[RMDB]
RNA sequence: GGGAACGACUCGAGUAGAGUCGAAAAGUGCUGUGAUGGCAUUUGGCAGAAGCGUACCGAGCGCGCACUAUUUCGGCUUACCUAUCUUCGUGGGUCCGGUUCGAUCCGCGCGGUCAGAAUGUCUCAACGACCAAAAAACUUUCGAGUUUUUUGGUCGAAAAGAAACAACAACAACAAC
Reactivity to DMS in 0.01 (KOAc 150mM, MgCl2 10mM, bicine 150mM(pH8.5), 24C), signal-to-noise 2, nucleotides 027 to 126: g050u020g040c000u000g020u010g000a090u030g020g040c020a010u020u010u020g000g010c010a120g010a090a110g010c060g030u010a080c090c060g020a050g020c020g020c030g000c050a050c070u000a110u000u000u000c000g000g000c020u020u000a150c020c050u010a120u000c040u040u010c110g000u000g000g020g010u010c080c110g000g020u010u030c130g010a040u020c050c040g010c020g000c080g000g000u030c080a050g000a060a090u000g000u020c000u000c070a110a230
Reactivity to 2A3 in 0.01 (KOAc 150mM, MgCl2 10mM, bicine 150mM(pH8.5), 24C), signal-to-noise 5, nucleotides 027 to 126: g060u060g020c080u060g050u100g080a130u210g050g000c000a070u030u050u080g070g000c050a050g040a210a020g050c010g030u030a050c040c040g040a030g030c030g020c010g020c010a020c020u070a300u050u030u030c010g000g020c000u020u040a030c010c000u030a040u070c050u070u060c040g040u060g000g000g000u010c050c030g110g000u120u120c050g000a050u000c000c010g000c000g010c010g000g000u020c010a030g040a120a050u110g040u000c010u000c050a030a060